Structure probing data (DMS and 2A3) for a 177-nucleotide construct. For DMS, 1,992 sequencing reads were counted. For 2A3 the reverse transcriptase was SuperScript II with manganese. In probing experiments dimethyl sulfate is read out at A N1 and C N3, which are open when not base-paired.
RNA sequence: GGGAACGACUCGAGUAGAGUCGAAAACCGGCCCUACCGCCGUCGCGACUAUGCUGAGUCGUCGUGACGAGACGCGGGAAAAUCGUCUGCACUCUCGGGCCGGCCACCCAGCGGGACGACCUGGUCAGCCAUAUCAGACAUUCGUGUCUGAUAUGGCAAAAGAAACAACAACAACAAC
Reactivity to DMS in 0.01 (KOAc 150mM, MgCl2 10mM, bicine 150mM(pH8.5), 24C), signal-to-noise 2, nucleotides 027 to 126: c020c000g000g010c010c020c010u000a250c020c020g030c010c050g020u000c010g020c010g000a010c000u000a070u000g010c200u000g000a200g010u020c130g000u000c010g030u010g020a010c000g010a180g000a110c220g000c070g000g010g010a100a030a100a120u000c050g010u000c050u000g030c080a120c160u000c050u010c130g000g000g010c000c010g000g010c030c070a050c000c010c000a090g000c020g000g000g000a030c060g000a070c140c010u000g000g020u000c070a130
Reactivity to 2A3 in 0.01 (KOAc 150mM, MgCl2 10mM, bicine 150mM(pH8.5), 24C), signal-to-noise 2, nucleotides 027 to 126: c000c000g020g000c030c000c000u040a050c000c000g040c020c020g000u010c010g030c000g010a000c020u050a050u130g030c130u200g150a030g070u070c020g010u000c010g000u030g000a000c030g000a050g040a020c080g000c020g020g020g000a030a030a000a050u060c040g130u040c090u130g060c070a060c080u120c010u070c080g000g040g000c010c020g000g000c000c010a020c010c000c000a000g020c010g030g010g010a030c040g030a050c000c060u070g010g110u100c030a020